The record gives the reactivity of an RNA of 177 nucleotides to 2A3 and DMS. Values cover nucleotides 27 to 126. Source: RMDB library OK1LIB, as collected in RNAgym. For DMS, 2,080 sequencing reads were counted.
RNA sequence: GGGAACGACUCGAGUAGAGUCGAAAACUGCAAGGGACGAAACACAGUCUCGAUGCUUUUUGACUGUUCCGUCCCGCUCUCGAGCUUUCGGCCGCCUCGACUGUUGAGGGUGAAUAACGAUGGAUACCCGUCCGUCAUUAUUCGUAAUGACGGACGGAAAAGAAACAACAACAACAAC
Reactivity to 2A3 in 0.01 (KOAc 150mM, MgCl2 10mM, bicine 150mM(pH8.5), 24C), signal-to-noise 3, nucleotides 027 to 126: c090u100g020c080a160a230g040g000g010a000c020g080a050a030a030c100a030c020a030g010u000c010u000c050g070a130u300g090c040u110u110u010u040u120g000a010c020u000g000u040u080c050c010g000u020c000c000c000g000c000u000c010u010c010g080a080g040c050u000u010u090c010g060g010c000c020g050c030c000u020c010g020a100c090u010g000u020u030g000a010g000g020g000u060g010a040a000u040a010a020c010g000a030u020g010g000a000u060a110c000
Reactivity to DMS in 0.01 (KOAc 150mM, MgCl2 10mM, bicine 150mM(pH8.5), 24C), signal-to-noise 2, nucleotides 027 to 126: c090u040g000c190a060a200g000g000g000a000c000g020a170a110a060c150a120c140a000g000u000c000u010c240g060a080u010g050c150u000u030u040u000u030g030a010c050u000g010u010u020c070c000g000u000c010c000c000g020c040u000c070u010c020g040a020g050c080u000u000u000c040g000g000c080c070g000c110c020u040c010g000a060c080u030g030u000u040g070a190g000g000g000u010g030a050a040u000a040a010c040g000a000u000g000g010a010u030a100c130